[RMDB]
RNA sequence: GGGAACGACUCGAGUAGAGUCGAAAAACGUCGACGAGCGCGACCAGCCGUUCAUCACCGGCGAGCGCACCCGGGAAGGCUUCUACCGCACCAAGAACGGCAUCGAGCCUUGCAUCGCUCGGGCGAAGCAUCUCCUUUUAUUCGUAAAAGGAGAUGCAAAAGAAACAACAACAACAAC
Reactivity to 2A3 in 0.01 (KOAc 150mM, MgCl2 10mM, bicine 150mM(pH8.5), 24C), signal-to-noise 9, nucleotides 027 to 126: a000c030g040u030c020g040a130c020g010a030g020c040g000c020g040a080c030c020a020g010c010c010g030u060u080c060a110u070c020a100c080c010g030g000c030g020a060g030c060g000c020a070c000c010c000g000g020g020a060a040g030g010c000u100u010c020u080a070c020c030g020c050a060c040c050a080a040g040a100a020c010g020g000c020a040u080c060g020a020g020c000c020u050u120g050c050a090u080c040g000c010u010c000g000g010g000c030g020a050a010
Reactivity to DMS in 0.01 (KOAc 150mM, MgCl2 10mM, bicine 150mM(pH8.5), 24C), signal-to-noise 9, nucleotides 027 to 126: a090c110g020u000c030g010a090c040g000a050g010c010g000c040g000a090c120c110a090g010c020c010g000u020u010c080a120u020c140a160c120c010g000g000c040g000a110g000c020g010c050a100c080c020c030g010g000g010a080a050g000g000c020u010u010c090u010a110c040c020g010c090a130c110c150a110a100g000a070a120c020g000g000c050a100u010c290g000a050g000c020c010u000u020g000c070a120u030c080g010c010u000c010g000g000g000c040g010a110a120